[RMDB]
RNA sequence: GGGAACGACUCGAGUAGAGUCGAAAAGAUAUGGACCCAGCUUUUGACGGCAAGUACUCGGAAACGAGUACAUUUGCCGAUAAGCUGGUCCUAAGUCAAAAGCCUGGCUAGUUCGCUAGCCAGGCAAUCAACAUUUGUUCUUCGGAACAAAUGUUGAAAAAGAAACAACAACAACAAC
Reactivity to DMS in 0.01 (KOAc 150mM, MgCl2 10mM, bicine 150mM(pH8.5), 24C), signal-to-noise 3, nucleotides 027 to 126: g010a040u000a300u000g010g000a010c100c090c050a000g020c010u000u000u010u000g010a160c120g000g010c000a020a040g000u010a000c000u000c000g010g000a080a090a190c000g000a020g030u000a000c000a030u000u000u010g010c000c010g000a050u000a010a010g000c000u000g000g000u000c000c000u000a030a110g010u000c020a080a150a120a180g000c000c000u000g010g000c000u000a010g010u000u010c260g020c000u000a010g000c000c000a000g000g010c000a000a000
Reactivity to 2A3 in 0.01 (KOAc 150mM, MgCl2 10mM, bicine 150mM(pH8.5), 24C), signal-to-noise 2, nucleotides 027 to 126: g030a000u040a010u130g010g010a030c080c090c100a010g000c010u090u100u110u210g300a150c060g000g000c010a040a010g000u010a000c000u000c010g000g050a010a050a010c000g010a000g010u020a000c000a000u010u030u040g000c010c000g000a010u010a030a000g000c000u000g030g000u000c000c000u020a090a010g020u010c020a220a030a080a020g000c000c020u000g000g010c020u000a020g050u070u120c300g000c170u000a000g000c000c000a010g000g010c000a010a000